[RMDB]
RNA sequence: GGGAACGACUCGAGUAGAGUCGAAAACAUUAGAGUUUACACACAUAGCCACGUGCUGCAUAAUGAUGCUUCAGUCAAAGGCAGACCACAAUAGAACAGUGCUCCCAUAACAUAAUAACUACUGUUUCUAUGUUCAGAUAUGUUUAGAUAGCACAAAGAUGAAGCUCGAAUUCGUUCGAGCUUCAUCAAAAGAAACAACAACAACAAC
Reactivity to 2A3 in 0.01 (KOAc 150mM, MgCl2 10mM, bicine 150mM(pH8.5), 24C), signal-to-noise 2, nucleotides 027 to 156: c020a100u090u170a030g000a040g100u060u200u300a110c060a000c040a000c040a040u030a020g010c010c040a130c090g040u080g060c000u080g010c000a010u020a210a060u150g020a030u010g030c070u120u110c130a110g050u050c060a060a020a000g000g000c060a000g020a050c020c060a040c030a110a150u020a020g090a060a000c030a010g050u020g060c040u060c040c000c000a070u040a080a010c020a010u140a150a040u090a010a160c010u120a030c010u070g030u100u000u000c000u010a060u150g000u000u060c020a020g020a130u030a010u060g070u000u060u000a040g020a090u060a020g060c050a020c010a120a110a000
Reactivity to DMS in 0.01 (KOAc 150mM, MgCl2 10mM, bicine 150mM(pH8.5), 24C), signal-to-noise 1, nucleotides 027 to 156: c050a080u000u000a060g010a220g110u010u000u000a150c040a250c130a050c000a160u010a140g020c000c070a050c100g000u000g060c000u000g040c050a090u010a120a070u000g010a040u010g010c090u010u010c100a210g010u000c070a010a140a260g010g010c010a010g000a150c020c010a090c080a100a060u000a000g010a020a130c000a050g030u000g040c220u000c040c000c000a090u000a100a060c090a070u000a030a030u020a090a010c000u000a060c020u000g000u000u000u000c030u000a030u030g000u030u000c150a080g020a110u000a000u010g020u000u000u030a160g000a080u000a100g010c020a080c050a050a190a190